Background: An RNA of 177 nucleotides, treated with DMS and read out base by base. The RNA was probed in 150 mM KOAc, 10 mM MgCl2 and 150 mM bicine (pH 8.5) at 24 C.

RNA sequence: GGGAACGACUCGAGUAGAGUCGAAAAGAUAUGGAGUCUGCGAUAAGCUGUAGAAUCGGAAACGAUUCUACAGCUUUUGACGCAGCUCCUAAGUCAAAAGUAAGCUAGAGUUCGCUCUAGCUUACAAUCCUUACUCCGAGUUCGCUCGGAGUAAGGAAAAAGAAACAACAACAACAAC
Reactivity to DMS in 0.01 (KOAc 150mM, MgCl2 10mM, bicine 150mM(pH8.5), 24C), signal-to-noise 2, nucleotides 027 to 126: g030a030u000a300u010g010g000a030g010u000c010u010g030c000g020a170u000a030a010g000c000u000g000u010a020g000a010a000u000c010g010g000a180a120a190c000g010a000u000u000c000u000a000c000a000g000c010u000u000u000u000g010a180c070g010c010a020g010c020u000c000c000u000a000a080g000u000c040a070a100a190a140g000u000a010a050g000c000u010a010g000a040g000u000u000c240g030c000u000c000u000a000g020c000u000u010a000c000a070a070